[RMDB]
RNA sequence: GGGAACGACUCGAGUAGAGUCGAAAAAUGGAGCAUGCCGAUUUUAUCACAUCGACAACGCAUAAAACUUUGCGUGGACCACGUGGUGGGCUUAUCUUGAUGGGGAAAGAUCGAGAAAAUGAUCGAGAUCCCAUGCAAAGUUCGCUUUGCAUGGGAUAAAAGAAACAACAACAACAAC
Reactivity to 2A3 in 0.01 (KOAc 150mM, MgCl2 10mM, bicine 150mM(pH8.5), 24C), signal-to-noise 3, nucleotides 027 to 126: a000u100g070g000a020g030c020a050u020g040c020c030g060a050u020u040u040u090a230u100c050a030c000a060u040c010g030a020c030a080a010c020g000c030a010u140a080a160a080a100c080u040u090u050g010c000g030u040g010g060a030c020c010a020c070g160u140g060g070u010g010g050g000c050u120u080a090u050c040u030u110g000a030u050g030g000g010g010a000a030a010g040a010u030c010g000a020g050a160a160a040a110u130g020a060u030c010g040a010g020
Reactivity to DMS in 0.01 (KOAc 150mM, MgCl2 10mM, bicine 150mM(pH8.5), 24C), signal-to-noise 3, nucleotides 027 to 126: a100u010g010g010a060g000c050a070u010g010c030c000g000a030u000u000u010u030a070u010c080a050c120a040u000c030g020a070c090a100a040c040g010c000a020u000a030a050a100a110c230u000u000u010g010c010g030u000g010g010a060c050c040a020c090g020u010g010g040u010g010g000g010c050u000u000a070u010c100u000u000g010a060u000g000g000g010g000a120a040a050g000a020u000c010g010a100g000a040a050a130a040u010g000a030u000c020g000a140g000

The record gives the reactivity of an RNA of 177 nucleotides to 2A3 and DMS.
Source: RMDB library OK2TST, as collected in RNAgym.
For DMS, 2,862 sequencing reads were counted.
Conditions: 150 mM KOAc, 10 mM MgCl2 and 150 mM bicine (pH 8.5), 24 C.
In probing experiments dimethyl sulfate is read out at A N1 and C N3, which are open when not base-paired.